[RMDB]
RNA sequence: GGGAACGACUCGAGUAGAGUCGAAAAUUACACCAAACUUGGGUAAGUGCACAUGCUAUACUGGGGUUGUUAGAUCAGGGAAUGUGUCUUGAGCUCACCUGGACGAAUUAACCUCAUGAUCUCAAGACAGAUAUCUCUCUUUCGAGAGAGAUAUCUGAAAAGAAACAACAACAACAAC
Reactivity to 2A3 in 0.01 (KOAc 150mM, MgCl2 10mM, bicine 150mM(pH8.5), 24C), signal-to-noise 5, nucleotides 027 to 126: u040u020a040c050a030c030c000a060a020a080c060u050u060g030g000g010u050a080a050g060u040g040c050a070c030a190u200g010c010u060a040u040a210c070u020g020g000g010g000u020u010g040u030u070a020g010a070u030c010a000g030g030g040a110a160u130g060u010g020u070c040u090u160g040a040g000c010u020c030a050c010c000u010g000g020a010c020g030a040a050u140u050a080a030c000c000u000c010a020u040g040a040u010c010u000c010a000a040g030a070
Reactivity to DMS in 0.01 (KOAc 150mM, MgCl2 10mM, bicine 150mM(pH8.5), 24C), signal-to-noise 5, nucleotides 027 to 126: u000u010a090c090a250c020c030a070a060a180c090u000u000g000g000g000u000a050a070g020u010g020c060a110c140a060u010g010c040u000a110u010a080c110u000g020g000g010g010u000u000g010u010u000a120g010a070u000c040a040g000g010g000a110a070u010g010u010g010u010c050u010u010g010a120g000c040u000c030a130c030c040u010g020g010a080c070g010a070a060u010u010a040a070c010c010u000c040a070u010g010a080u000c010u000c020a030a070g000a180